Overview:
This 177-nucleotide RNA was probed chemically with 2A3 and DMS. For DMS the reverse transcriptase was MarathonRT. The RNA was probed in 150 mM KOAc, 10 mM MgCl2 and 150 mM bicine (pH 8.5) at 24 C. For 2A3, 1,676 sequencing reads were counted. 2A3 adducts were read by reverse transcription with SuperScript II with manganese.
RNA sequence: GGGAACGACUCGAGUAGAGUCGAAAAGCUACGCCCGGACGAACUUCCCAGCUCGGCCGACAAUCAGGGGUCGGUGGGAUCUUCGUCCGUUUGUAUCAAAACUCGAGGUGGCUUCGGCCACCUCGAGGCAUAUGAAUCACUUCGGUGAUUCAUAUGCAAAAGAAACAACAACAACAAC
Reactivity to 2A3 in 0.01 (KOAc 150mM, MgCl2 10mM, bicine 150mM(pH8.5), 24C), signal-to-noise 1, nucleotides 027 to 126: g020c010u050a040c070g150c040c000c000g000g000a020c000g010a000a010c000u010u020c000c000c000a150g030c120u170c090g000g000c010c010g100a130c100a160a200u300c140a070g160g030g000g070u000c010g030g030u010g010g000g000a010u000c010u000u010c000g000u000c000c000g010u000u040u020g020u040a040u080c000a030a070a020a100c000u010c000g010a010g000g020u010g000g000c000u050u090c180g080g000c000c000a020c060c010u000c000g000a000g000
Reactivity to DMS in 0.01 (KOAc 150mM, MgCl2 10mM, bicine 150mM(pH8.5), 24C), signal-to-noise 2, nucleotides 027 to 126: g000c180u000a030c090g020c080c090c000g030g010a010c000g000a010a010c030u020u000c000c000c000a060g010c130u020c020g020g010c000c000g020a180c130a160a090u000c280a110g010g000g010g050u000c000g010g000u000g000g000g000a010u000c030u010u000c000g000u000c010c000g000u000u020u000g010u010a030u000c020a080a090a040a300c000u000c000g000a010g010g010u000g010g000c010u010u010c230g050g020c000c000a000c010c000u000c010g000a000g000